[RMDB]
RNA sequence: GGGAACGACUCGAGUAGAGUCGAAAACGCCACGCAAGCGGCAAUCUUCAAUGCGCGCUUUCAACAAAGGGUCAUCCGGUGAGGUAAAUGGCAGUUUGUCGAUGAUAACGCAGGAUAAAGCAUCACCGUUCGGUAUCUUUUUCGAAAGAUACCGAACAAAAGAAACAACAACAACAAC
Reactivity to DMS in 0.01 (KOAc 150mM, MgCl2 10mM, bicine 150mM(pH8.5), 24C), signal-to-noise 3, nucleotides 027 to 126: c170g030c020c010a040c070g020c190a100a070g040c020g010g000c050a070a090u000c120u000u020c110a110a090u000g010c050g000c030g020c100u000u000u000c080a080a070c090a090a110a050g010g010g010u000c030a030u000c020c020g000g020u000g000a060g000g000u000a030a100a050u000g000g010c010a030g020u000u000u010g020u000c080g010a040u000g000a050u000a070a100c080g000c020a070g000g010a130u010a050a100a120g000c080a090u000c080a060c120c180
Reactivity to 2A3 in 0.01 (KOAc 150mM, MgCl2 10mM, bicine 150mM(pH8.5), 24C), signal-to-noise 2, nucleotides 027 to 126: c040g050c010c010a020c030g050c070a100a030g000c000g070g030c040a020a120u070c040u200u100c090a080a140u070g000c130g010c000g000c020u030u110u060c070a020a070c030a050a110a020g060g000g010u040c010a030u000c030c020g080g030u140g040a040g000g050u080a070a120a090u070g040g000c000a020g060u030u060u100g030u030c010g040a070u080g030a050u030a120a050c020g000c040a000g000g040a040u070a120a100a000g030c000a040u050c020a010c030c020